Chemical mapping of a 177-nucleotide RNA with DMS and 2A3. For DMS the reverse transcriptase was MarathonRT. It was measured as part of the RMDB library M2PK90. The 2A3 profile rests on 1,922 reads.

RNA sequence: GGGAACGACUCGAGUAGAGUCGAAAACAACAGGGAGGUUGGUGGUGGACGAGCCACUCGCCAACCGGGUCAGGUCCGGAAGGAAGCAGCCCUAACGAGCCAGGCACGGGUCGCCCUGCCAGUACAAAGAGACUCAUAUGUUCGCAUAUGAGUCUCUAAAAGAAACAACAACAACAAC
Reactivity to DMS in 0.01 (KOAc 150mM, MgCl2 10mM, bicine 150mM(pH8.5), 24C), signal-to-noise 3, nucleotides 027 to 126: c100a070a240c010a050g020g000g000a090g010g000u000u000g000g030u010g010g040u000g000g010a210c300g000a190g040c000c000a010c000u000c040g020c010c000a030a090c020c020g000g000g000u000c030a180g020g010u000c010c000g020g000a140a060g000g000a030a040g010c070a250g000c060c010c010u000a110a200c040g010a060g000c050c020a080g000g040c140a040c120g000g000g000u010c080g000c010c010c000u000g000c060c030a170g050u020a070c140a060a080
Reactivity to 2A3 in 0.01 (KOAc 150mM, MgCl2 10mM, bicine 150mM(pH8.5), 24C), signal-to-noise 1, nucleotides 027 to 126: c010a020a010c010a040g050g030g010a070g000g000u060u040g000g010u010g020g010u040g050g070a090c070g020a070g230c000c010a000c010u080c020g000c000c000a010a030c010c010g000g010g010u020c020a000g020g000u000c000c000g030g060a010a040g080g000a000a050g070c020a020g040c030c010c000u010a040a020c040g000a010g030c020c030a040g040g080c090a040c100g050g030g040u080c040g050c010c000c000u020g050c000c020a060g010u060a040c040a030a220